An RNA of 177 nucleotides, treated with 2A3 and DMS and read out base by base. 2A3 is a SHAPE reagent: it acylates the 2'-hydroxyl of flexible nucleotides of all four kinds. The RNA was probed in 150 mM KOAc, 10 mM MgCl2 and 150 mM bicine (pH 8.5) at 24 C. Values cover nucleotides 27 to 126. The 2A3 profile rests on 723 reads. Values are in units of 0.01, from 0 to 300, in steps of 10.
[RMDB]
RNA sequence: GGGAACGACUCGAGUAGAGUCGAAAAACAGGGAGAUCCUACUUAGACAUUGAGAUGUUUCAGUUAGGACAAGCUGUAGCACGUGAUGCUGAAUCACAGAUGAGUUCAAUUUUAGAAGAUGAAUUAGCAGCAAACACUGGUUCGCCAGUGUUUGCUGAAAAGAAACAACAACAACAAC
Reactivity to 2A3 in 0.01 (KOAc 150mM, MgCl2 10mM, bicine 150mM(pH8.5), 24C), signal-to-noise 1, nucleotides 027 to 126: a010c010a000g010g040g010a050g010a120u000c000c000u020a010c000u060u020a020g020a010c010a060u020u190g170a240g040a240u030g000u000u020u000c000a030g010u120u300a020g000g040a000c000a010a000g020c020u000g010u040a010g060c040a030c050g010u000g040a000u000g030c060u130g140a000a020u030c000a010c010a060g070a090u200g040a030g000u050u010c010a060a080u060u000u080u200a140g090a260a050g040a110u080g020a020a050u020u030a070g040
Reactivity to DMS in 0.01 (KOAc 150mM, MgCl2 10mM, bicine 150mM(pH8.5), 24C), signal-to-noise 2, nucleotides 027 to 126: a060c010a010g000g010g030a300g000a220u000c000c000u000a010c000u000u000a050g000a000c010a020u000u020g040a160g010a100u000g020u000u000u000c060a010g000u000u000a020g010g030a030c040a030a300g010c000u010g020u000a020g010c060a070c170g000u000g000a000u000g010c110u030g000a070a030u010c000a030c020a060g010a130u000g000a090g010u030u000c050a040a110u000u010u000u000a060g010a120a090g000a120u000g000a060a040u010u020a100g030